[RMDB]
RNA sequence: GGGAACGACUCGAGUAGAGUCGAAAAGGGUGGUGAUCCCGUCGCUGGCAUUACGGGCACGGGUGCGCGAAGCGUCGCUGACCGACCUCAUCUAUGCUCAUCACCCGCGGUUCACCGGUGUGCGGCGUGGUAUUGACCUGUUCGCAGGUCAAUACCAAAAAGAAACAACAACAACAAC
Reactivity to DMS in 0.01 (KOAc 150mM, MgCl2 10mM, bicine 150mM(pH8.5), 24C), signal-to-noise 3, nucleotides 027 to 126: g000g000g030u000g010g000u000g000a110u020c050c020c020g020u010c130g020c030u000g020g010c090a070u010u000a130c130g000g000g000c060a050c040g000g020g020u010g030c090g010c080g000a100a100g000c090g010u000c030g010c030u000g010a080c040c020g010a200c120c050u000c080a100u000c110u000a060u000g030c040u000c020a060u000c030a030c010c000c000g030c090g000g000u000u010c040a110c060c040g000g030u000g010u000g010c030g010g010c010g020
Reactivity to 2A3 in 0.01 (KOAc 150mM, MgCl2 10mM, bicine 150mM(pH8.5), 24C), signal-to-noise 1, nucleotides 027 to 126: g000g000g020u020g010g050u050g020a070u160c000c000c020g010u030c060g010c000u040g060g020c000a060u090u240a090c190g030g010g000c050a020c050g020g000g020u000g030c080g010c030g060a130a050g030c050g070u070c000g020c060u080g090a070c000c000g060a030c000c030u060c020a080u000c050u120a100u140g010c010u000c010a040u030c010a000c000c000c040g000c040g000g050u120u120c050a060c150c060g000g090u060g000u020g040c000g000g000c010g050